This 177-nucleotide RNA was probed chemically with 2A3 and DMS. 2A3 adducts were read by reverse transcription with SuperScript II with manganese. For DMS, 894 sequencing reads were counted. The RNA was probed in 150 mM KOAc, 10 mM MgCl2 and 150 mM bicine (pH 8.5) at 24 C. It was measured as part of the RMDB library RFMREP.
[RMDB]
RNA sequence: GGGAACGACUCGAGUAGAGUCGAAAAUAAAUGAAGAAAUACCAUCCUUGCUCUGCGAUGGCCGUCGAACACAUACACUUGAGAAUUCUGAGUGAGGGUACUGUAGCAUCGGGUUACUGUACACCAACGUGUAAUAGGACUUCGGUCCUAUUACACGAAAAGAAACAACAACAACAAC
Reactivity to 2A3 in 0.01 (KOAc 150mM, MgCl2 10mM, bicine 150mM(pH8.5), 24C), signal-to-noise 2, nucleotides 027 to 126: u140a010a070a060u190g050a010a130g090a090a090a040u150a110c010c010a020u060c000c000u030u050g000c030u020c030u130g040c040g060a070u020g020g030c020c010g120u060c030g030a090a020c040a000c000a100u240a070c020a000c050u010u070g040a060g100a230a160u250u050c040u110g030a050g060u060g060a110g040g030g000u020a020c010u030g000u010a020g020c020a040u110c160g300g000g000u000u000a030c000u020g000u010a000c120a120c030c010a030a030
Reactivity to DMS in 0.01 (KOAc 150mM, MgCl2 10mM, bicine 150mM(pH8.5), 24C), signal-to-noise 2, nucleotides 027 to 126: u000a070a040a090u000g000a230a140g000a040a090a100u000a130c060c010a100u020c020c080u000u010g010c070u000c020u000g010c080g010a060u000g000g040c030c040g000u000c050g000a080a110c110a100c090a130u050a110c080a040c060u010u010g000a100g000a210a130u000u010c040u010g000a060g000u000g000a120g010g000g000u000a020c010u000g000u000a010g020c010a170u010c160g010g000g010u000u000a000c010u010g010u000a040c040a060c080c020a020a180